Structure probing data (DMS and 2A3) for a 177-nucleotide construct. It was measured as part of the RMDB library OK1LIB. 2A3 adducts were read by reverse transcription with SuperScript II with manganese. Values cover nucleotides 27 to 126. The DMS profile rests on 2,731 reads. The 2A3 profile rests on 1,597 reads.
[RMDB]
RNA sequence: GGGAACGACUCGAGUAGAGUCGAAAACGCUAAACACCAGUCGCAGACGAUAAAACUCACGCUACGUCAAGACGGAUGUGACAGCGCGAAAGCUAGCGCAAGCUUUAGCGUUACGUACGAGUAGCGAUAAAAUAUAUAUAUUCGUAUAUAUAUUUUAAAAAGAAACAACAACAACAAC
Reactivity to DMS in 0.01 (KOAc 150mM, MgCl2 10mM, bicine 150mM(pH8.5), 24C), signal-to-noise 2, nucleotides 027 to 126: c030g010c040u020a040a020a050c090a080c130c070a150g000u000c020g010c050a040g000a080c030g010a160u040a040a080a140a080c070u020c090a130c040g000c010u000a000c030g000u030c110a080a170g010a090c000g000g010a050u000g000u020g010a020c050a110g000c000g000c030g020a120a060a090g010c160u040a070g000c050g010c030a090a110g000c120u000u000u000a060g000c000g000u010u020a040c110g000u020a060c120g000a080g020u020a010g000c000g000a300
Reactivity to 2A3 in 0.01 (KOAc 150mM, MgCl2 10mM, bicine 150mM(pH8.5), 24C), signal-to-noise 3, nucleotides 027 to 126: c010g000c030u020a000a040a020c060a070c020c080a050g010u000c010g020c050a030g010a050c020g000a050u160a140a160a030a030c040u070c060a070c020g030c020u040a010c020g120u070c020a030a030g110a040c000g040g000a010u030g020u020g060a020c020a020g000c000g000c000g090a100a090a040g070c120u140a020g050c010g020c070a040a020g000c000u010u010u030a000g000c020g010u000u050a050c080g030u080a030c050g030a040g060u010a010g020c000g010a010
Description: Conditions: 150 mM KOAc, 10 mM MgCl2 and 150 mM bicine (pH 8.5), 24 C.